[RMDB]
RNA sequence: GGGAACGACUCGAGUAGAGUCGAAAAGGGGUCGUGGGAGUCACUAUAGACAGCAUUGCGAGGUGCUGAAGCCUCCACGGCACUACCCACCGCAAUGCCGAAGUGACGAAGAACACGACGGAGGCACCCAAAACCUGGCAAGUUCGCUUGCCAGGAACUAAUCUAAAGUGUUCGCACUUUAGAUUAGAAAAGAAACAACAACAACAAC
Reactivity to 2A3 in 0.01 (KOAc 150mM, MgCl2 10mM, bicine 150mM(pH8.5), 24C), signal-to-noise 3, nucleotides 027 to 156: g030g020g080g030u010c010g010u020g000g020g000a040g000u010c000a000c000u070a050u130a210g090a130c180a070g000c000a010u010u000g000c000g000a010g010g000u000g000c000u020g030a080a040g020c000c000u000c000c000a010c000g010g010c000a000c000u050a030c020c060c030a010c000c010g000c010a000a000u000g000c030c040g170a140a000g000u010g000a000c020g040a130a010g010a000a000c010a000c000g010a000c010g000g000a000g000g000c010a030c000c010c000a040a160a040a080c000c000u000g000g000c000a000a000g020u100u130c200g090c210u000u000g000c000c000a000g000g000a000a000
Reactivity to DMS in 0.01 (KOAc 150mM, MgCl2 10mM, bicine 150mM(pH8.5), 24C), signal-to-noise 2, nucleotides 027 to 156: g050g000g030g030u000c010g000u000g020g030g020a300g010u000c040a060c000u010a280u000a100g000a140c120a070g040c000a000u000u000g030c060g000a130g000g010u000g010c010u010g030a060a110g010c010c020u000c030c020a300c020g050g000c010a020c030u000a070c010c000c030a300c040c010g000c010a010a000u000g020c000c010g000a120a040g030u010g010a070c010g000a140a180g020a000a140c000a010c000g010a040c030g020g010a030g070g070c000a110c000c000c030a110a120a110a290c000c000u000g000g010c020a020a010g020u010u010c300g020c010u000u000g030c000c010a000g010g010a000a080